[RMDB]
RNA sequence: GGGAACGACUCGAGUAGAGUCGAAAAGAUCGGAAACAGCAGCAGGUGAGUCCGCCUUAUGUGAAGUAUCGGCUGAAACACGAGGAAAUACUGAGCCAACGCAAGACGGUAGCCGAACAGUAGCAACAAAACGCUUACGUGUUCGCACGUAAGCGAACUCAUUUAAUACCUUCGGGUAUUAAAUGAGAAAAGAAACAACAACAACAAC
Reactivity to 2A3 in 0.01 (KOAc 150mM, MgCl2 10mM, bicine 150mM(pH8.5), 24C), signal-to-noise 8, nucleotides 027 to 156: g040a030u120c050g030g020a070a040a040c030a030g050c010a000g010c010a010g000g040u040g030a040g040u040c040c030g020c020c020u140u110a140u090g050u030g070a050a020g030u050a120u120c040g010g010c020u040g030a110a060a000c080a020c080g040a060g010g070a060a090a020u150a090c070u070g020a020g030c010c030a050a030c060g010c040a040a030g050a020c020g040g040u060a010g000c010c000g010a000a010c010a020g070u070a000g020c020a010a060c020a060a110a020a010c010g000c000u000u000a000c000g000u010g030u040u080c170g020c090a000c000g000u000a000a000g000c000g000a000a000
Reactivity to DMS in 0.01 (KOAc 150mM, MgCl2 10mM, bicine 150mM(pH8.5), 24C), signal-to-noise 3, nucleotides 027 to 156: g000a080u000c040g000g010a120a070a100c050a090g010c030a050g030c090a120g000g010u010g010a160g010u000c020c030g010c010c040u000u000a060u020g000u010g020a120a110g010u010a070u010c020g010g010c020u000g010a170a120a050c050a060c060g020a100g020g000a070a060a070u010a060c030u010g010a090g000c040c020a040a070c050g020c030a060a080g020a150c060g000g020u000a090g010c030c010g020a060a050c040a090g020u000a080g000c040a070a130c100a050a070a070a080c020g020c040u000u010a010c000g030u010g000u000u010c290g040c000a020c000g000u000a000a010g000c010g010a010a030